[RMDB]
RNA sequence: GGGAACGACUCGAGUAGAGUCGAAAAUACAAUGGCCGUGCCAAAGGAGUACGUCGUCAACGCAACGCACGCUACUGGGGACAUUGUACCUCUGCAAACGGUGUGCGGGCCUGACCCGAAGUUGGUCCGUGGAGUCUGGAUUCGUCCAGACUCCACGAAAAGAAACAACAACAACAAC
Reactivity to DMS in 0.01 (KOAc 150mM, MgCl2 10mM, bicine 150mM(pH8.5), 24C), signal-to-noise 1, nucleotides 027 to 126: u010a010c110a090a160u020g010g020c050c050g040u030g020c000c040a030a080a190g010g000a230g040u010a050c010g000u010c100g000u000c060a030a070c260g010c060a100a220c050g020c000a010c000g050c000u000a130c150u010g010g010g090g010a100c040a090u000u030g000u010a020c000c000u000c000u000g000c300a030a060a160c150g000g010u000g000u000g030c020g000g040g000c000c040u000g000a040c030c010c030g080a070a120g010u000u000g000g020u000c050
The data come from the RNA Mapping Database (RMDB), library OK2TRN. An RNA of 177 nucleotides, treated with DMS and read out base by base. For DMS the reverse transcriptase was MarathonRT. The RNA was probed in 150 mM KOAc, 10 mM MgCl2 and 150 mM bicine (pH 8.5) at 24 C.